[RMDB]
RNA sequence: GGGAACGACUCGAGUAGAGUCGAAAAGAUAUGGAACGCUAAGUUUCGAGGAUCCCCGGUUGGUCGUAACAUCGCUCGGAAACGAGCGUGGACCAACCGGGGGGAGAAACGAAAGCGUUCCUAAGUCGGACAGAUAAAAGUUCGCUUUUAUCUGUCCAAAAGAAACAACAACAACAAC
Reactivity to 2A3 in 0.01 (KOAc 150mM, MgCl2 10mM, bicine 150mM(pH8.5), 24C), signal-to-noise 2, nucleotides 027 to 126: g030a020u160a070u280g010g010a000a010c000g020c000u040a070a020g030u000u030u000c040g020a280g020g020a010u000c000c000c000c000g000g000u000u010g010g050u020c060g090u070a140a070c050a300u230c060g030c020u030c020g000g040a130a120a080c020g000a030g000c010g000u020g010g010a010c010c010a010a000c000c010g000g000g030g000g000g000a020g000a000a010a010c000g030a110a060a010g010c000g010u000u020c000c000u000a030a020g020u020c100
Reactivity to DMS in 0.01 (KOAc 150mM, MgCl2 10mM, bicine 150mM(pH8.5), 24C), signal-to-noise 2, nucleotides 027 to 126: g010a100u020a300u010g010g000a000a010c000g010c000u020a060a300g000u000u000u000c000g000a070g010g000a030u010c000c000c000c000g010g020u000u000g000g040u000c010g000u010a050a220c140a030u010c000g010c000u000c000g020g000a140a140a230c010g010a010g000c000g050u000g000g000a010c000c000a000a000c020c000g000g010g000g010g000g020a010g020a010a000a010c020g000a070a100a060g020c000g020u000u010c000c000u000a020a070g010u020c120

The record gives the reactivity of an RNA of 177 nucleotides to 2A3 and DMS.
The reactions ran in a buffer of 150 mM KOAc, 10 mM MgCl2 and 150 mM bicine (pH 8.5), at 24 C.
For DMS the reverse transcriptase was MarathonRT.